Notes
This 177-nucleotide RNA was probed chemically with DMS.

[RMDB]
RNA sequence: GGGAACGACUCGAGUAGAGUCGAAAAAUAGUAUAGACACCCAUUUGAACCUUAAUAAAGUUGAGCUUUUCAUGGCCAACUUUUUUGGCGUGUAAAACAUAGGACAGCCAUGUUUUAAAUGAAAAGACUCUAUCUUUACCUUCGGGUAAAGAUAGAGAAAAGAAACAACAACAACAAC
Reactivity to DMS in 0.01 (KOAc 150mM, MgCl2 10mM, bicine 150mM(pH8.5), 24C), signal-to-noise 1, nucleotides 027 to 126: a150u000a070g040u040a130u040a170g040a110c090a140c000c010c010a180u020u000u000g040a110a070c040c070u000u000a050a040u000a050a040a000g020u000u000g000a070g000c000u000u000u010u000c160a050u010g000g010c000c010a010a020c140u000u000u010u000u010u010g010g000c050g030u000g000u000a030a030a070a020c000a020u000a130g020g000a120c280a110g010c020c050a050u000g000u010u000u020u000a020a030a020u000g010a030a060a080a080g000a120